[RMDB]
Source: RMDB library TTRDES, as collected in RNAgym. An RNA of 177 nucleotides, treated with 2A3 and DMS and read out base by base. For 2A3 the reverse transcriptase was SuperScript II with manganese. DMS adducts were read by reverse transcription with MarathonRT.

RNA sequence: GGGAACGACUCGAGUAGAGUCGAAAAGAUAUGGAUUAUCUCGGCUUCGAAGAACUAUAGUCGGAAACGACUAUAGGGAGAAGACCGAGAGUAAUCCUAAGUCAAAAUCCUGGGUUCGCCCAGGAAACUAGGACACAUAGUUCGCUAUGUGUCCUAGAAAAGAAACAACAACAACAAC
Reactivity to 2A3 in 0.01 (KOAc 150mM, MgCl2 10mM, bicine 150mM(pH8.5), 24C), signal-to-noise 1, nucleotides 027 to 126: g030a000u120a050u140g010g000a000u010u010a080u070c010u030c030g010g000c050u020u060c060g300a300a040g020a040a040c020u000a000u000a000g000u030c020g050g000a160a110a020c000g000a010c010u010a020u050a000g000g000g050a040g030a040a060g110a210c010c010g000a000g000a000g020u010a010a010u000c020c020u040a090a010g020u030c080a000a080a100a300u020c000c000u000g020g010g020u090u110c300g130c050c000c000a010g040g000a040a000a000
Reactivity to DMS in 0.01 (KOAc 150mM, MgCl2 10mM, bicine 150mM(pH8.5), 24C), signal-to-noise 2, nucleotides 027 to 126: g010a010u000a300u000g000g000a000u010u000a020u040c010u000c000g010g000c000u000u000c010g020a140a220g000a260a210c010u000a000u000a010g010u000c000g000g010a080a120a170c000g000a020c010u000a000u000a030g020g020g000a110g000a030a010g030a160c000c000g000a010g000a030g010u010a000a010u000c000c000u020a070a080g060u000c010a150a120a140a090u000c010c000u000g000g000g000u000u000c300g010c000c000c000a020g000g010a000a000a050